[RMDB]
RNA sequence: GGGAACGACUCGAGUAGAGUCGAAAAUGGUAGGUUUUCUACCGCACUGAGUCGGGAGCACUACCGUGUUAGCCGUACAGUUCACGGACACCACGAAUAGUAGUAGAUUCACUACUGUGGUAGACAAGGGUAUAUCUUACUUCGGUAAGAUAUGCCCAAAAGAAACAACAACAACAAC
Reactivity to 2A3 in 0.01 (KOAc 150mM, MgCl2 10mM, bicine 150mM(pH8.5), 24C), signal-to-noise 9, nucleotides 027 to 126: u140g050g020u070a080g030g050u060u060u060u060c010u020a020c000c000g010c010a090c070u090g030a010g020u050c020g000g010g040a040g030c020a010c050u040a030c020c000g000u000g010u020u100a050g010c010c000g020u040a050c040a110g050u060u120c060a010c010g010g010a020c020a010c060c000a000c000g010a050a090u060a070g020u000a000g000u000a020g020a170u080u080c050a010c030u040a000c010u010g010u010g020g000u010a020g040a060c070a090a150
Reactivity to DMS in 0.01 (KOAc 150mM, MgCl2 10mM, bicine 150mM(pH8.5), 24C), signal-to-noise 9, nucleotides 027 to 126: u030g000g010u010a020g010g020u020u010u020u020c020u000a050c010c000g010c200a050c120u030g010a070g010u010c010g010g010g000a160g010c280a080c020u010a030c130c000g000u010g010u010u020a080g010c010c000g000u010a120c130a120g010u020u010c110a060c060g000g000a170c110a030c030c000a030c010g000a120a140u030a020g000u000a020g000u010a100g000a170u030u030c110a030c030u010a040c070u000g010u000g000g000u000a040g010a150c210a100a140
Background
The record gives the reactivity of an RNA of 177 nucleotides to 2A3 and DMS. The RNA was probed in 150 mM KOAc, 10 mM MgCl2 and 150 mM bicine (pH 8.5) at 24 C. 2A3 adducts were read by reverse transcription with SuperScript II with manganese.